[RMDB]
RNA sequence: GGGAACGACUCGAGUAGAGUCGAAAAGGCCGCCAAGUGUUCUGUGAAAGCCCCGGGCUCAACCCGGGAACGGCAGGGCAUACUGGCGGUCUUGAGGGAUCUAGGGGCAGACAGAACAGUCGGUGGAUAAAAUGAGGAUAUUCGUAUCCUCAUUUUAAAAAGAAACAACAACAACAAC
Reactivity to DMS in 0.01 (KOAc 150mM, MgCl2 10mM, bicine 150mM(pH8.5), 24C), signal-to-noise 9, nucleotides 027 to 126: g000g010c000c000g010c000c000a020a100g010u000g010u000u000c000u010g010u000g010a110a160a240g010c300c000c000c000g000g000g000c100u050c300a120a300c010c000c000g010g000g000a010a020c070g010g000c000a010g000g000g000c000a010u000a060c100u000g000g010c000g000g010u000c000u000u000g000a120g000g000g000a110u010c060u010a110g010g000g010g000c080a070g010a070c060a080g000a090a080c130a090g010u010c040g010g010u000g000g010a200
Reactivity to 2A3 in 0.01 (KOAc 150mM, MgCl2 10mM, bicine 150mM(pH8.5), 24C), signal-to-noise 6, nucleotides 027 to 126: g000g000c000c000g000c000c000a020a030g020u000g010u020u000c000u000g020u020g150a210a100a090g020c010c000c000c010g000g000g010c080u100c170a160a190c000c000c000g000g000g010a020a010c000g110g000c000a000g010g000g000c000a000u040a080c030u020g000g000c000g000g000u000c000u000u000g000a000g000g010g010a030u030c040u090a050g000g010g000g010c000a020g020a040c020a020g110a190a050c020a030g080u070c030g020g050u070g030g020a040